[RMDB]
RNA sequence: GGGAACGACUCGAGUAGAGUCGAAAAGAUAUGGAUCCUAUUAAGACAGAUCAUACCUCGGAAACGAGGUAUCGAUCAAUGACGAUAGGAGUCCUAAGUCAAAGGAGAGGGCUUCGGCCCUCUCCAAGCCUAGUUAAAACUUCGGUUUUAACUAGGCAAAAGAAACAACAACAACAAC
Reactivity to DMS in 0.01 (KOAc 150mM, MgCl2 10mM, bicine 150mM(pH8.5), 24C), signal-to-noise 2, nucleotides 027 to 126: g000a020u000a030u010g010g010a270u010c000c000u000a000u000u000a030a160g010a270c050a050g020a000u010c000a010u000a000c000c000u000c000g030g000a000a010a020c010g010a020g010g010u010a000u010c160g010a000u000c000a210a240u000g000a050c030g000a000u000a030g010g000a030g010u000c010c000u000a000a070g000u000c000a100a080a120g000g000a030g000a000g000g010g020c000u000u010c190g010g010c000c000c010u000c000u000c010c000a020a040
Reactivity to 2A3 in 0.01 (KOAc 150mM, MgCl2 10mM, bicine 150mM(pH8.5), 24C), signal-to-noise 2, nucleotides 027 to 126: g000a000u000a010u020g000g000a000u030c010c010u030a030u030u020a080a090g090a130c190a130g000a020u010c000a000u000a000c000c000u000c000g000g010a000a000a000c010g000a000g010g000u000a000u000c000g010a000u000c000a020a210u050g000a000c000g000a000u020a000g050g030a030g180u160c000c000u000a010a000g000u030c060a130a110a120g020g010a010g010a000g000g000g000c050u120u140c300g130g010c030c000c010u000c000u000c010c000a000a000